Background:
An RNA of 177 nucleotides, treated with 2A3 and DMS and read out base by base. For 2A3 the reverse transcriptase was SuperScript II with manganese. As a SHAPE reagent, 2A3 marks flexible, mostly unpaired nucleotides at the ribose 2'-OH. Reactivities are given for positions 27 through 126. The data come from the RNA Mapping Database (RMDB), library M2PK50. The RNA was probed in 150 mM KOAc, 10 mM MgCl2 and 150 mM bicine (pH 8.5) at 24 C.
RNA sequence: GGGAACGACUCGAGUAGAGUCGAAAAAGACUUGUAUUCGUACAAGUCUACAGAAAUUUCGCUAGCACACGAUCACACCUAGCCUUCUCAAUAACGAUCGAACAACGUGUCAAUUCGUUGACACGAACCACCUGCAAAAAUUCGUUUUUGCAGGUGGAAAAGAAACAACAACAACAAC
Reactivity to 2A3 in 0.01 (KOAc 150mM, MgCl2 10mM, bicine 150mM(pH8.5), 24C), signal-to-noise 3, nucleotides 027 to 126: a000g000a010c000u000u000g000u000a010u010u090c200g000u020a010c010a000a000g000u020c000u000a010c010a020g250a040a130a060u160u200u110c070g000c020u010a020g010c020a040c010a010c090g030a030u020c010a020c020a040c090c020u010a010g000c000c020u040u000c010u020c000a040a130u110a070a020c050g060a070u070c030g060a080a030c030a080a060c020g010u010g010u000c000a000a010u090u020c140g070u070u030g000a000c000a000c000g010a000a000
Reactivity to DMS in 0.01 (KOAc 150mM, MgCl2 10mM, bicine 150mM(pH8.5), 24C), signal-to-noise 2, nucleotides 027 to 126: a000g010a040c000u000u000g000u000a010u010u030c180g040u000a000c000a000a000g010u000c010u000a060c230a110g030a060a130a130u000u000u000c060g040c000u000a040g010c110a130c110a040c050g020a040u000c030a140c110a060c050c010u000a050g000c020c070u000u000c000u010c040a080a100u010a040a110c190g010a060u000c040g010a160a080c180a050a160c090g030u000g000u000c000a020a020u000u010c170g040u000u000g000a000c000a010c000g020a090a100